[RMDB]
RNA sequence: GGGAACGACUCGAGUAGAGUCGAAAAGGGGUCUGUACUUUUGACGGACAACAUGUCAUCGCCGGUGAAAUACUGGUUGUCAGCUCUGAAGCCUCCACGGAGCUUGGAUUUACCAGGAGAUGACAUGUUGUCCGAUAAGUACAGACGGAGGCACCCAGCAAUAUGUAGUGUUCGCACUACAUAUUGCAAAAGAAACAACAACAACAAC
Reactivity to 2A3 in 0.01 (KOAc 150mM, MgCl2 10mM, bicine 150mM(pH8.5), 24C), signal-to-noise 7, nucleotides 027 to 156: g090g000g030g000u020c000u000g020u000a010c020u040u130u180u240g300a220c030g000g000a000c000a000a000c000a000u000g010u000c010a000u010c010g040c070c050g210g060u300g170a080a090a050u300a150c080u070g010g040u030u020g040u050c010a010g000c000u000c000u010g040a070a010g010c000c010u000c010c010a020c010g000g000a010g010c020u020u140g110g010a030u110u090u260a040c030c030a080g000g010a050g000a010u010g000a000c000a000u000g000u000u000g000u000c000c000g000a000u000a000a000g000u000a000c010a000g000a000c000g000g000a000g010g010c000a030c010c000c010a000
Reactivity to DMS in 0.01 (KOAc 150mM, MgCl2 10mM, bicine 150mM(pH8.5), 24C), signal-to-noise 2, nucleotides 027 to 156: g010g000g010g020u000c000u010g010u000a010c000u000u010u000u000g000a110c070g030g010a030c000a000a000c010a030u000g010u020c010a020u010c020g000c020c020g000g030u000g010a160a100a150u000a150c220u000g010g020u000u010g030u000c030a080g040c000u010c010u010g010a060a090g040c030c020u000c020c040a300c020g010g010a020g010c000u000u010g040g010a100u000u010u000a050c010c000a120g030g000a040g000a030u000g000a020c000a000u000g000u000u000g020u000c010c000g000a000u000a010a030g010u010a040c000a020g010a020c010g010g000a020g020g040c040a200c010c000c010a250
Structure probing data (2A3 and DMS) for a 207-nucleotide construct. Conditions: 150 mM KOAc, 10 mM MgCl2 and 150 mM bicine (pH 8.5), 24 C.